RNA sequence: GGGAACGACUCGAGUAGAGUCGAAAACAGUGCUUCGGCACUGAAAAAUUGGUCCUCGGUAGUGGUUUCCGGGCAGUUAUACCCGUGAACUUCGAUCGAAGAUCCAUAAAACCCGAGUUCGCUCGGGGCAAGUAAUGAUCUUCGGAUCAUUACUUGCAAAAGAAACAACAACAACAAC
Reactivity to 2A3 in 0.01 (KOAc 150mM, MgCl2 10mM, bicine 150mM(pH8.5), 24C), signal-to-noise 2, nucleotides 027 to 126: c010a000g000u000g020c000u040u110c170g190g030c000a000c000u000g040a000a010a010a020a040u050u040g000g000u010c000c010u000c020g000g000u010a000g010u010g010g000u010u020u050c040c010g020g000g000c080a060g030u250u160a140u110a150c020c000c000g010u030g030a000a000c000u040u000c020g000a020u010c020g000a010a000g000a020u040c000c000a040u170a170a160a060a070c010c000c000g000a000g010u080u140c200g000c080u000c000g000g000g010
Reactivity to DMS in 0.01 (KOAc 150mM, MgCl2 10mM, bicine 150mM(pH8.5), 24C), signal-to-noise 1, nucleotides 027 to 126: c050a020g000u000g010c000u010u010c200g030g020c000a020c000u000g000a040a060a050a150a150u000u000g010g000u000c010c020u000c000g000g000u000a060g020u010g030g000u000u000u000c300c010g000g010g030c090a080g010u000u000a140u030a050c000c010c000g010u000g000a010a010c000u000u000c000g000a030u000c010g000a050a000g000a020u010c010c090a000u020a030a030a180a250c010c000c000g000a010g000u000u000c230g020c030u000c010g010g000g010
Record summary:
The record gives the reactivity of an RNA of 177 nucleotides to 2A3 and DMS. 2A3 adducts were read by reverse transcription with SuperScript II with manganese. The reactions ran in a buffer of 150 mM KOAc, 10 mM MgCl2 and 150 mM bicine (pH 8.5), at 24 C. Values are in units of 0.01, from 0 to 300, in steps of 10. For DMS the reverse transcriptase was MarathonRT. Source: RMDB library RFMREP, as collected in RNAgym.